Structure probing data (DMS) for a 177-nucleotide construct. The RNA was probed in 150 mM KOAc, 10 mM MgCl2 and 150 mM bicine (pH 8.5) at 24 C. It was measured as part of the RMDB library TTRDEL.
[RMDB]
RNA sequence: GGGAACGACUCGAGUAGAGUCGAAAAGAUAUGGACGUUUACGAAGCACAACAGCUCGGAAACGAGACAUGUGCCGUACGGACGUCCUAAGUCAAAAGACGGCAAGAGCUUCGGCUCUUGCCGUCAAUCCCAUCUUUAACUUCGGUUAAAGAUGGGAAAAAGAAACAACAACAACAAC
Reactivity to DMS in 0.01 (KOAc 150mM, MgCl2 10mM, bicine 150mM(pH8.5), 24C), signal-to-noise 1, nucleotides 027 to 126: g000a030u000a300u010g000g000a020c000g000u000u000u000a070c060g020a300a160g020c030a010c010a030a070c140a100g000c010u000c000g000g000a090a110a160c000g000a020g010a030c090a150u000g010u000g000c000c050g000u000a150c300g010g000a010c000g000u030c000c010u000a020a040g000u010c020a080a110a140a100g000a000c000g020g000c020a010a010g030a000g000c040u000u030c210g030g000c000u000c000u000u000g050c040c000g010u000c010a000a070